[RMDB]
RNA sequence: GGGAACGACUCGAGUAGAGUCGAAAAAAAAUGAGUGCGUGGUAGCACAAACCAGACCAAACUUCGGCACAUGGUCGCACAAGUACAGCUUCGCCUGUACAAAGCGAACAACAACAACAACAAGCAAGUAAUUGAAUAGAUUCGUCUAUUCAAUUACAAAAGAAACAACAACAACAAC
Reactivity to DMS in 0.01 (KOAc 150mM, MgCl2 10mM, bicine 150mM(pH8.5), 24C), signal-to-noise 5, nucleotides 027 to 126: a040a040a070a090u020g020a130g020u000g020c050g020u010g030g000u000a090g010c030a020c030a040a070a100c080c020a100g010a090c040c030a060a080a120c120u000u000c050g000g020c060a050c130a100u000g000g010u000c020g020c020a040c160a070a160g000u000a000c000a000g010c030u020u010c240g000c200c010u000g000u000a000c010a080a130a090g010c010g000a020a040c040a020a040c010a020a010c020a030a020c030a040a020c080a100a130g020c260a040a100
Reactivity to 2A3 in 0.01 (KOAc 150mM, MgCl2 10mM, bicine 150mM(pH8.5), 24C), signal-to-noise 4, nucleotides 027 to 126: a000a000a000a000u100g000a010g020u030g010c030g010u050g040g080u130a070g030c020a010c000a030a060a000c010c000a020g070a050c020c010a060a110a090c060u150u110c080g080g010c050a040c030a140u080g080g010u010c010g000c000a080c010a090a120g000u000a010c000a000g000c000u120u160c090g020c060c000u000g000u030a010c020a010a090a030g000c010g000a010a000c010a010a000c000a010a000c000a010a000c000a020a010c000a030a030g140c040a180a060

Chemical mapping of a 177-nucleotide RNA with DMS and 2A3. The data come from the RNA Mapping Database (RMDB), library M2PK90. The DMS profile rests on 4,283 reads. The RNA was probed in 150 mM KOAc, 10 mM MgCl2 and 150 mM bicine (pH 8.5) at 24 C.